[RMDB]
About this RNA
Chemical mapping of a 177-nucleotide RNA with 2A3 and DMS. For DMS, 498 sequencing reads were counted. The RNA was probed in 150 mM KOAc, 10 mM MgCl2 and 150 mM bicine (pH 8.5) at 24 C.

RNA sequence: GGGAACGACUCGAGUAGAGUCGAAAACACAGGCGACUUAAUCGGAGAGCGGUUACACGCGAGGAAGAUGAAAUAAUUACAUCAGUAGACUCGAGAUUACUACAACUUGCGUUGCUAUCUCAAAUAAGUUGUAUCGCACAUUCGUGUGCGAUACAACAAAAGAAACAACAACAACAAC
Reactivity to 2A3 in 0.01 (KOAc 150mM, MgCl2 10mM, bicine 150mM(pH8.5), 24C), signal-to-noise 1, nucleotides 027 to 126: c160a030c000a090g060g080c040g000a020c090u090u130a110a060u090c080g040g000a010g000a010g090c100g030g000u030u080a070c050a000c060g030c030g000a000g060g000a120a050g010a040u040g060a000a050a110u290a020a080u230u100a040c010a030u000c000a000g030u010a010g030a010c030u000c080g030a080g000a120u120u210a020c010u010a010c010a030a000c010u010u000g050c000g010u030u040g050c020u020a040u070c020u000c000a070a140a180u230a090a010
Reactivity to DMS in 0.01 (KOAc 150mM, MgCl2 10mM, bicine 150mM(pH8.5), 24C), signal-to-noise 1, nucleotides 027 to 126: c030a090c100a060g000g000c000g030a070c090u000u000a170a090u010c100g000g000a030g010a080g000c080g000g000u010u020a100c150a110c000g000c020g030a000g000g020a110a170g000a020u000g000a190a210a180u000a070a070u010u000a180c020a000u000c060a200g030u060a120g000a090c070u000c110g010a140g020a100u000u000a030c010u000a020c010a140a120c010u000u000g000c020g000u010u000g060c100u010a070u000c040u000c000a120a000a060u010a070a100